[RMDB]
RNA sequence: GGGAACGACUCGAGUAGAGUCGAAAAGAUGGCUCACUACCAACGAGAGUAAACAUAUGUUGAAUUUUUCCUAUAUGCCUUACACAAAUUGUACUUAAUACAAAAGUCUGAUAAGGACAGUUAACAUUUAUUGAGUACUUACUACUUGCUAAAUGCACUGGGACUAUUUAUUCGUAAAUAGUCCCAGAAAAGAAACAACAACAACAAC
Reactivity to DMS in 0.01 (KOAc 150mM, MgCl2 10mM, bicine 150mM(pH8.5), 24C), signal-to-noise 1, nucleotides 027 to 156: g000a070u010g010g050c030u010c170a100c110u000a170c040c030a100a130c090g000a180g000a140g010u010a060a090a080c050a090u010a110u000g010u010u000g010a110a160u000u030u000u000u000c020c010u000a140u000a100u010g010c010c020u000u000a010c020a060c070a080a140a200u010u020g040u000a030c070u010u000a090a210u000a000c060a010a020a050a150g010u000c040u000g000a110u000a080a040g000g000a080c070a090g010u010u000a090a040c060a020u010u010u000a040u000u000g000a010g010u000a030c040u000u000a090c120u000a040c010u000u010g010c270u010a010a060a080u000g010c000a210
Reactivity to 2A3 in 0.01 (KOAc 150mM, MgCl2 10mM, bicine 150mM(pH8.5), 24C), signal-to-noise 3, nucleotides 027 to 156: g130a070u090g010g000c000u010c030a070c030u110a080c080c020a100a060c050g030a010g010a040g150u110a090a140a060c100a050u130a080u190g070u020u050g080a170a210u080u070u030u020u070c030c020u060a070u000a030u150g040c000c000u030u080a040c090a000c000a070a120a110u010u110g000u000a000c010u050u070a040a080u050a070c050a030a120a030a010g020u000c020u070g060a200u130a180a050g010g050a010c020a020g040u040u070a130a040c030a070u050u060u010a020u010u030g000a000g010u010a010c010u030u040a060c050u040a050c010u030u000g020c000u090a150a170a070u170g010c050a030